[RMDB]
RNA sequence: GGGAACGACUCGAGUAGAGUCGAAAAUGGCGACAGAGCAAGACUCCAUCUCAAAACAAAACAAACAAACAAACAAAAAAACAAAGUCAUGGGAGCAGAUAAGGAUAAUGAAGCCACCUGGGGCUGGUGAGCAUGGGGUCUCUUACCCCACCCCUUAGUCUACUAUGGGUUUCGACCCAUAGUAGACAAAAGAAACAACAACAACAAC
Reactivity to 2A3 in 0.01 (KOAc 150mM, MgCl2 10mM, bicine 150mM(pH8.5), 24C), signal-to-noise 1, nucleotides 027 to 156: u040g020g000c000g040a040c040a020g070a020g070c030a060a060g020a040c000u010c010c000a110u020c040u000c050a070a130a040a060c040a080a090a080a010c150a260a060a000c000a010a030a090c000a000a150a040c070a220a140a090a010a000a000a000c090a070a060a050g040u170c000a070u110g000g040g040a050g000c070a010g000a070u170a030a040g010g020a030u070a210a000u140g070a000a000g000c010c000a030c020c020u040g000g000g010g000c000u030g010g000u070g000a010g000c020a020u010g010g000g000g050u000c020u000c000u040u090a060c000c000c000c000a030c000c000c000c000u000u040a000